This 177-nucleotide RNA was probed chemically with 2A3 and DMS. Reactivities are given for positions 27 through 126. Reactivities are rounded to 0.1 and cut off at 0 and 3. For DMS, 7,880 sequencing reads were counted. Source: RMDB library OK2TST, as collected in RNAgym.
[RMDB]
RNA sequence: GGGAACGACUCGAGUAGAGUCGAAAAGCGGUGGGUACGGUCCGCUGUCGCGGCGGUUCGGGCUCGUCGCCGAUCAUCUCGUAGGCGUGGAGGUCGUCACGGUCGACGCGACGGGGAACGCGAAGGAGACCGAUCCAUUAUUCGUAAUGGAUCGGUCAAAAGAAACAACAACAACAAC
Reactivity to 2A3 in 0.01 (KOAc 150mM, MgCl2 10mM, bicine 150mM(pH8.5), 24C), signal-to-noise 3, nucleotides 027 to 126: g020c030g060g060u080g040g020g010u060a030c030g020g010u010c010c030g100c100u020g080u110c080g030c060g010g020c000g020g000u040u150c010g000g040g000c020u010c000g070u020c010g000c000c000g020a060u110c020a100u050c060u050c130g050u080a060g050g000c050g010u080g110g080a060g040g190u060c020g040u060c060a030c140g050g030u050c030g010a030c030g000c010g000a000c020g020g000g000g020a060a010c030g010c040g090a070a030g090g060a080
Reactivity to DMS in 0.01 (KOAc 150mM, MgCl2 10mM, bicine 150mM(pH8.5), 24C), signal-to-noise 5, nucleotides 027 to 126: g000c050g010g000u010g000g000g010u000a080c020g010g000u000c010c020g030c010u000g010u000c130g020c080g000g010c010g000g010u000u000c020g000g000g020c010u000c010g010u000c010g010c000c010g020a150u020c100a140u000c130u010c100g010u010a140g010g010c010g030u000g000g010a100g010g010u000c030g010u020c110a080c130g010g010u000c060g010a090c040g010c010g000a020c000g020g000g000g010a080a050c040g010c080g010a110a080g010g010a300